[RMDB]
RNA sequence: GGGAACGACUCGAGUAGAGUCGAAAACUAUGUGUCAGACAAUAUUCAUAUGUAUUAGCUCAUUACUGUAUGUAUUGUACAGUAUGUACAGUUACAUAUAUUGUAAUCAUCACAAUAACCCUAUUAGGUUGGAGCUAUUAUUGUCCUUUUUCACAGAGUACUAAUAAUCAUUCGUGAUUAUUAGUACAAAAGAAACAACAACAACAAC
Reactivity to DMS in 0.01 (KOAc 150mM, MgCl2 10mM, bicine 150mM(pH8.5), 24C), signal-to-noise 4, nucleotides 027 to 156: c030u000a050u000g020u000g020u000c130a140g010a080c020a030a040u000a040u010u010c100a160u000a080u000g020u010a080u000u000a080g000c020u000c020a300u000u000a010c010u000g000u000a000u010g020u000a030u010u010g010u000a010c020a240g030u020a050u010g010u000a010c000a050g020u000u000a020c010a030u000a010u000a050u000u000g030u000a050a050u000c060a090u000c060a090c060a060a090u010a050a050c010c010c030u010a170u000u010a040g030g030u020u000g010g010a070g030c010u000a030u000u000a030u000u000g000u010c010c080u000u010u000u000u000c040a130c070a090g010a300
Reactivity to 2A3 in 0.01 (KOAc 150mM, MgCl2 10mM, bicine 150mM(pH8.5), 24C), signal-to-noise 9, nucleotides 027 to 156: c040u040a050u110g020u000g020u040c040a020g020a010c010a020a020u030a060u120u190c110a080u170a110u300g100u120a150u150u060a060g000c010u010c020a020u000u040a010c010u000g000u010a000u000g010u010a010u020u040g000u000a010c030a100g210u240a160u190g000u000a030c000a010g020u060u050a020c010a000u020a000u010a040u050u110g010u010a020a020u040c080a020u110c060a030c030a150a130u090a080a040c020c010c040u140a240u210u200a090g030g000u000u050g050g000a000g010c000u020a030u060u010a010u000u010g010u030c000c020u080u170u050u080u060c030a040c020a020g120a030
Notes: Chemical mapping of a 207-nucleotide RNA with DMS and 2A3. Reactivities are given for positions 27 through 156. The data come from the RNA Mapping Database (RMDB), library OK3TST.